[RMDB]
RNA sequence: GGGAACGACUCGAGUAGAGUCGAAAACCUACCUUCGGGUAGGCUCACUUCCUAAGUCCUAAGUACCUAUCAAUCCGAUAAGCAUCGGAAACGAUGCUUUUGACGGAUCAUAACGGGUAAACUUAGGAUAUGGAUCAACACCAGUUUCGACUGGUAAGUAUCAUAAACUCUUCGGAGUUUAUGAUACAAAAGAAACAACAACAACAAC
Reactivity to DMS in 0.01 (KOAc 150mM, MgCl2 10mM, bicine 150mM(pH8.5), 24C), signal-to-noise 2, nucleotides 027 to 156: c010c000u000a010c000c020u000u020c300g030g030g030u000a010g000g030c010u000c090a070c050u000u000c010c010u000a080a210g010u010c000c010u020a000a030g040u000a010c010c010u000a060u010c090a100a200u000c030c000g000a180u000a030a020g010c000a020u010c000g020g000a110a100a230c010g040a030u000g010c010u000u000u000u010g030a230c070g010g000a000u000c090a120u010a100a040c050g000g030g030u000a010a050a050c000u010u000a000g040g010a010u000a130u010g010g000a090u000c050a080a160c030a060c010c010a040g000u010u010u010c240g020a160c000u010g000g010u000a030a080
Reactivity to 2A3 in 0.01 (KOAc 150mM, MgCl2 10mM, bicine 150mM(pH8.5), 24C), signal-to-noise 6, nucleotides 027 to 156: c000c000u000a000c000c000u040u070c270g120g000g000u000a000g010g000c010u050c050a160c070u080u020c000c000u040a130a050g030u010c000c000u010a020a010g020u110a300c020c000u110a110u230c090a070a010u000c000c000g040a050u020a050a000g000c000a000u000c000g020g020a030a020a020c010g010a000u000g000c000u020u000u000u040g120a060c020g010g010a010u020c020a070u040a100a040c100g010g020g010u030a140a120a040c000u010u000a000g000g000a000u000a000u010g010g000a040u150c070a060a090c010a030c110c000a000g000u030u130u130c180g160a060c010u000g000g000u010a030a020